Chemical mapping of a 177-nucleotide RNA with DMS and 2A3. 2A3 adducts were read by reverse transcription with SuperScript II with manganese. For 2A3, 12,497 sequencing reads were counted. The data come from the RNA Mapping Database (RMDB), library OK1LIB.

RNA sequence: GGGAACGACUCGAGUAGAGUCGAAAACGGCGGUCCUUGGACUAAAAGCCCCAAAUCCGGCCAGUAGGUUUCUUGGCUGUUUUGCUUUUGGCAUGGGGGCGUCCCAUAGCUGGUAGGUCCGUUUUGGCGAUAAAUAAUAAUUCGUUAUUAUUUAUCGAAAAGAAACAACAACAACAAC
Reactivity to DMS in 0.01 (KOAc 150mM, MgCl2 10mM, bicine 150mM(pH8.5), 24C), signal-to-noise 7, nucleotides 027 to 126: c050g010g000c040g000g010u010c000c020u000u010g000g000a090c050u010a050a070a010a170g000c010c060c020c030a090a070a080u020c230c030g000g020c010c010a020g010u010a090g020g020u010u020u010c030u020u010g010g000c010u000g000u010u010u010u000g000c010u000u000u020u040g010g010c010a050u020g010g000g000g010g020c020g000u010c020c010c040a130u030a070g010c070u010g000g010u010a050g010g000u010c010c010g010u000u000u030u020g010g010
Reactivity to 2A3 in 0.01 (KOAc 150mM, MgCl2 10mM, bicine 150mM(pH8.5), 24C), signal-to-noise 6, nucleotides 027 to 126: c020g010g000c000g010g010u030c010c000u020u050g040g010a010c010u040a010a000a000a040g010c000c000c000c000a010a050a020u050c040c000g000g000c000c000a010g020u050a030g040g200u020u110u020c040u030u040g000g010c010u000g030u010u080u040u040g000c000u020u030u100u220g050g000c000a020u030g020g000g000g010g030c010g020u040c010c000c000a030u060a020g020c030u040g040g050u040a010g010g020u000c010c000g000u010u010u050u090g060g030